Structure probing data (DMS and 2A3) for a 177-nucleotide construct. 2A3 adducts were read by reverse transcription with SuperScript II with manganese. Values cover nucleotides 27 to 126. Conditions: 150 mM KOAc, 10 mM MgCl2 and 150 mM bicine (pH 8.5), 24 C.
RNA sequence: GGGAACGACUCGAGUAGAGUCGAAAAACGUGAGCAGAAGCCCACCUCGAGAUGCUACGUGGACGAGGGCAUGCCCAAGACACACCUUAACCCUAGCGGGGGUCGCUAGGGUGAAAUCACACCACGUCAGAUACGAUAGGUUCGCCUAUCGUAUCUGAAAAGAAACAACAACAACAAC
Reactivity to DMS in 0.01 (KOAc 150mM, MgCl2 10mM, bicine 150mM(pH8.5), 24C), signal-to-noise 1, nucleotides 027 to 126: a010c120g000u000g020a170g020c020a030g000a080a170g000c020c050c030a080c020c040u050c000g000a150g000a140u010g010c050u000a020c070g040u000g040g040a140c110g000a060g020g010g030c050a080u000g030c000c000c020a060a130g000a170c140a030c080a090c000c140u000u000a100a050c000c000c000u000a000g000c000g020g020g020g020g060u000c040g020c000u010a000g010g000g020u000g000a000a010a040u040c050a050c150a060c050c040a080c160g000u020
Reactivity to 2A3 in 0.01 (KOAc 150mM, MgCl2 10mM, bicine 150mM(pH8.5), 24C), signal-to-noise 2, nucleotides 027 to 126: a000c080g040u060g020a070g040c020a030g040a240a010g010c010c030c010a020c010c010u020c030g090a100g000a070u140g030c040u080a090c040g040u020g000g040a030c050g050a140g030g030g000c020a040u060g020c000c010c010a020a030g090a040c020a000c000a030c070c030u050u110a010a000c000c000c000u010a000g000c000g000g040g070g090g110u220c000g000c020u000a000g000g020g010u000g000a000a020a000u080c020a020c020a030c070c010a030c040g070u040